[RMDB]
RNA sequence: GGGAACGACUCGAGUAGAGUCGAAAAAUAGUAGAAGAUGCAGUGGAUUGGCGCCCCCAUGACAAAAUAGUCCUUAGCUCCUCUUCUUAUGAGCCUCAUGAAGCAGAGGUCCUCACUGUGAAAGAAGGUUAUAGAAGGUUUUCGAACCUUCUAUAACAAAAGAAACAACAACAACAAC
Reactivity to DMS in 0.01 (KOAc 150mM, MgCl2 10mM, bicine 150mM(pH8.5), 24C), signal-to-noise 5, nucleotides 027 to 126: a080u000a080g020u000a080g010a120a060g000a090u000g020c050a050g010u000g000g000a120u010u010g020g000c060g000c020c010c010c010c040a100u000g010a070c120a040a050a070a060u000a100g010u010c010c050u000u010a110g000c040u000c020c050u000c020u000u000c020u000u000a070u010g010a070g020c040c010u000c050a060u010g010a090a090g010c110a090g010a070g010g010u000c060c000u000c060a070c110u000g000u000g010a060a060a090g010a090a060g010
Reactivity to 2A3 in 0.01 (KOAc 150mM, MgCl2 10mM, bicine 150mM(pH8.5), 24C), signal-to-noise 2, nucleotides 027 to 126: a030u080a020g100u010a020g020a190a010g000a020u070g010c070a020g020u030g040g050a090u060u140g100g000c040g120c030c000c000c010c030a110u100g030a010c030a000a240a020a030u070a070g000u010c010c000u060u040a040g000c010u000c010c010u020c000u080u000c000u020u070a070u130g020a020g020c000c000u000c010a030u130g060a020a030g060c040a000g030a020g040g000u010c000c000u010c010a050c060u090g010u030g110a020a070a000g070a060a030g110

Background: The record gives the reactivity of an RNA of 177 nucleotides to DMS and 2A3. Source: RMDB library OK2TRN, as collected in RNAgym. For DMS the reverse transcriptase was MarathonRT. The reactions ran in a buffer of 150 mM KOAc, 10 mM MgCl2 and 150 mM bicine (pH 8.5), at 24 C.